[RMDB]
RNA sequence: GGGAACGACUCGAGUAGAGUCGAAAACACGAGCCGCGAGGCUCGUGACUCGAGGAGACUCGAGAAAGGUGUCAACAGUAGCUGCGACGAAGAGAGUCGACACCGUGACCAUCACAACAGACCGUGAGGUCAAGUGAUGGACACAAGCAGCACUGAAGUACUCAGCGGGAUUCGUCCCGCUGAGUACAAAAGAAACAACAACAACAAC
Reactivity to 2A3 in 0.01 (KOAc 150mM, MgCl2 10mM, bicine 150mM(pH8.5), 24C), signal-to-noise 1, nucleotides 027 to 156: c020a000c000g020a020g000c000c000g040c070g030a080g000g020c010u000c000g010u000g000a000c010u000c000g010a030g030g030a070g000a010c000u000c000g040a010g020a060a120a000g000g000u000g000u020c030a060a040c000a200g010u030a030g020c010u000g000c000g000a020c020g040a160a060g100a000g010a010g090u010c020g020a000c000a000c010c000g000u000g000a040c010c000a000u000c000a000c040a200a090c030a130g000a000c010c000g050u080g090a070g000g000u000c000a000a020g000u000g020a010u000g000g010a000c000a000c000a000a000g030c000a000g020c020a000c000u010g010a050a010

The record gives the reactivity of an RNA of 207 nucleotides to 2A3. For 2A3, 1,113 sequencing reads were counted. For 2A3 the reverse transcriptase was SuperScript II with manganese.